The record gives the reactivity of an RNA of 177 nucleotides to 2A3 and DMS. For DMS the reverse transcriptase was MarathonRT.

[RMDB]
RNA sequence: GGGAACGACUCGAGUAGAGUCGAAAAGAAAAGAAAGGCAAGGAGAACUCACCUGUCGUCGUCGACGAAGGCAUGUGAGCUUCCACUCGGUGAAGAGCGUCAGCGGACGGCCUCUGAGACGAGCGAUAUUCAUUACUCUCUUCGGAGAGUAAUGAAUAAAAGAAACAACAACAACAAC
Reactivity to 2A3 in 0.01 (KOAc 150mM, MgCl2 10mM, bicine 150mM(pH8.5), 24C), signal-to-noise 2, nucleotides 027 to 126: g020a000a080a000a000g060a050a060a010g070g040c070a050a050g060g010a090g020a090a080c000u000c020a010c010c010u010g000u000c010g020u000c010g070u100c100g050a300c060g000a030a010g000g000c000a000u020g000u000g010a020g000c000u040u000c000c010a030c010u010c020g010g060u060g030a040a020g010a010g000c030g020u010c030a060g080c050g300g030a020c030g030g020c020c020u010c030u000g010a010g020a000c000g010a000g020c020g010a010u000
Reactivity to DMS in 0.01 (KOAc 150mM, MgCl2 10mM, bicine 150mM(pH8.5), 24C), signal-to-noise 4, nucleotides 027 to 126: g030a080a040a060a060g000a060a070a060g010g010c170a090a080g000g000a090g020a040a140c020u000c010a010c010c040u000g020u000c000g030u000c000g020u020c300g010a140c070g010a010a040g000g000c010a010u010g010u000g010a010g030c140u000u010c020c030a140c020u000c010g010g010u000g000a160a010g000a000g010c110g000u000c020a100g000c120g010g020a050c060g010g000c070c010u000c020u000g010a300g000a030c020g000a020g000c120g000a130u000
For DMS, 2,675 sequencing reads were counted. For 2A3, 3,283 sequencing reads were counted.